[RMDB]
RNA sequence: GGGAACGACUCGAGUAGAGUCGAAAAAAAACCUUUUAAUGAAAGUCCAGAGAGGCUUGGAAGGGUUAUGAAGAGAAGGAAGCUUCAAUGCUGCCCUCUAUUUAACCAUACCCCGAGUCUAUCUUAGAUAUUUGUAUGCUUUCGAGCAUACAAAUAUAAAAGAAACAACAACAACAAC
Reactivity to 2A3 in 0.01 (KOAc 150mM, MgCl2 10mM, bicine 150mM(pH8.5), 24C), signal-to-noise 4, nucleotides 027 to 126: a000a000a000a030c150c030u190u130u050u080a110a150u160g090a120a020a010g040u030c060c070a000g030a000g000a010g050g000c000u000u000g000g030a070a080g120g010g000u000u010a020u040g080a040a120g010a020g050a200a050g000g010a010a000g000c000u110u110c190a140a200u300g000c010u030g000c000c020c000u000c000u040a100u030u060u020a000a010c000c000a030u120a080c040c020c010c000g000a010g000u010c000u020a030u000c000u020u050a030g010
Reactivity to DMS in 0.01 (KOAc 150mM, MgCl2 10mM, bicine 150mM(pH8.5), 24C), signal-to-noise 2, nucleotides 027 to 126: a070a070a090a080c060c000u020u020u000u030a100a100u040g000a090a040a070g000u010c070c050a080g010a090g000a030g010g000c020u000u000g000g000a110a080g000g010g000u000u000a000u000g010a080a040g010a040g020a110a060g010g000a100a000g000c000u010u030c300a120a030u020g010c010u000g000c000c010c000u000c000u000a050u000u010u010a000a030c020c020a070u020a090c280c060c010c000g000a010g010u000c000u010a070u000c010u020u020a060g000